Chemical mapping of a 177-nucleotide RNA with 2A3 and DMS. For 2A3, 1,781 sequencing reads were counted. For 2A3 the reverse transcriptase was SuperScript II with manganese. DMS adducts were read by reverse transcription with MarathonRT.
[RMDB]
RNA sequence: GGGAACGACUCGAGUAGAGUCGAAAAGAACGCCGAUGGAGCCGACAAUGGAGGUUUGCCGCGCCACGAUAUGAUCGGAUGCGCUGGCGAUCAUAUAGCCCGCGGAGGCGGCCAGCGUGCCGACCUAUCCCCUAUUUUACUUCGGUAAAAUAGGGGAAAAAGAAACAACAACAACAAC
Reactivity to 2A3 in 0.01 (KOAc 150mM, MgCl2 10mM, bicine 150mM(pH8.5), 24C), signal-to-noise 2, nucleotides 027 to 126: g000a110a010c020g000c030c020g000a030u090g090g010a030g040c010c010g070a080c040a120a130u100g060g020a060g050g000u040u070u140g020c010c020g030c000g010c010c020a030c050g060a010u050a080u200g170a130u010c020g010g070a140u080g020c030g000c020u030g010g000c000g010a020u050c010a010u150a010u040a130g000c000c000c000g070c170g120g040a150g000g020c070g000g020c000c000a030g000c010g030u020g000c010c010g000a020c000c010u050a090
Reactivity to DMS in 0.01 (KOAc 150mM, MgCl2 10mM, bicine 150mM(pH8.5), 24C), signal-to-noise 3, nucleotides 027 to 126: g010a130a170c110g010c040c010g000a110u010g000g000a180g020c020c010g010a060c080a040a090u000g010g030a100g000g000u010u000u000g020c030c010g030c060g000c030c110a080c100g000a080u000a050u000g000a020u000c000g010g000a130u000g010c000g010c010u000g000g000c000g000a070u010c090a070u000a120u010a130g010c040c080c010g000c150g000g010a160g010g030c030g010g020c000c010a020g000c050g010u000g020c020c020g010a050c010c020u000a160